[RMDB]
RNA sequence: GGGAACGACUCGAGUAGAGUCGAAAAGAGAAAGAGAUCAAACGCUAUUUCAGGGACAUAGCAUUCUGAGACGCACCCAUCACACGAGGGUGGCUACGGUGGAAGAAAACAAAAUACCACUACGAAACUCCAGUAUUAGGUUCGCCUAAUACUGGAGAAAAGAAACAACAACAACAAC
Reactivity to DMS in 0.01 (KOAc 150mM, MgCl2 10mM, bicine 150mM(pH8.5), 24C), signal-to-noise 4, nucleotides 027 to 126: g000a160g000a100a060a070g000a080g010a080u000c040a050a060a090c140g020c040u000a060u010u010u020c080a110g030g020g010a050c150a040u010a050g000c030a090u000u000c070u000g020a150g000a100c140g000c030a070c070c000c010a070u000c050a070c150a080c150g000a090g000g050g020u000g000g010c040u010a050c110g020g000u010g000g030a090a110g000a030a090a070a090c150a070a040a040a070u000a100c040c000a030c070u000a090c160g010a080a090a110
Reactivity to 2A3 in 0.01 (KOAc 150mM, MgCl2 10mM, bicine 150mM(pH8.5), 24C), signal-to-noise 4, nucleotides 027 to 126: g100a020g050a030a130a020g070a000g010a020u060c050a050a070a030c090g000c020u030a040u050u160u190c070a050g010g050g070a010c040a080u060a020g010c000a010u100u000c050u080g060a040g000a040c050g000c050a010c010c020c030a130u090c020a060c020a020c110g030a100g050g000g010u020g050g000c020u040a030c050g040g000u030g010g030a090a030g060a050a130a030a010c070a000a090a040a020u080a080c020c010a020c040u100a060c050g060a080a050a020

Structure probing data (DMS and 2A3) for a 177-nucleotide construct. Conditions: 150 mM KOAc, 10 mM MgCl2 and 150 mM bicine (pH 8.5), 24 C. For DMS the reverse transcriptase was MarathonRT.